RNA sequence: GGGAACGACUCGAGUAGAGUCGAAAAGAAAGCGAAAAUCGCUAACGAGCUAAAAGUCAAAGGACACCCUACAUAUAGAUAGCUCGUACUAGAAAGCUAGAAGCGAACUAUAUGGGAGCGAUAUCGCCACCCCACUGAUUUUCGAAUCAGUGGGGUGAAAAGAAACAACAACAACAAC
Reactivity to DMS in 0.01 (KOAc 150mM, MgCl2 10mM, bicine 150mM(pH8.5), 24C), signal-to-noise 2, nucleotides 027 to 126: g010a120a180a130g010c060g010a080a070a150a010u000c000g000c010u010a070a120c080g000a060g010c060u000a050a060a160a100g030u000c100a070a090a090g000g020a120c150a090c030c010c010u000a080c030a040u000a030u000a040g000a120u000a120g020c000u000c020g010u010a140c050u000a010g010a100a140a200g030c010u000a040g000a140a040g020c030g000a020a230c030u000a000u000a010u000g000g000g010a060g000c050g030a030u000a060u000c020g020c020
Reactivity to 2A3 in 0.01 (KOAc 150mM, MgCl2 10mM, bicine 150mM(pH8.5), 24C), signal-to-noise 2, nucleotides 027 to 126: g030a010a020a000g000c000g030a020a050a040a070u000c020g000c000u020a010a040c040g060a020g010c050u080a080a110a140a000g050u040c090a040a030a290g140g020a030c030a070c060c000c000u040a040c050a010u110a010u010a060g100a020u050a060g000c020u010c050g000u030a020c010u000a010g200a160a300a020g120c050u070a040g030a160a010g020c000g000a040a010c010u000a010u010a020u150g080g000g030a010g010c020g010a050u000a010u030c000g000c020

Chemical mapping of a 177-nucleotide RNA with DMS and 2A3. The RNA was probed in 150 mM KOAc, 10 mM MgCl2 and 150 mM bicine (pH 8.5) at 24 C. 2A3 is a SHAPE reagent: it acylates the 2'-hydroxyl of flexible nucleotides of all four kinds. The DMS profile rests on 1,023 reads. It was measured as part of the RMDB library OK2TRN.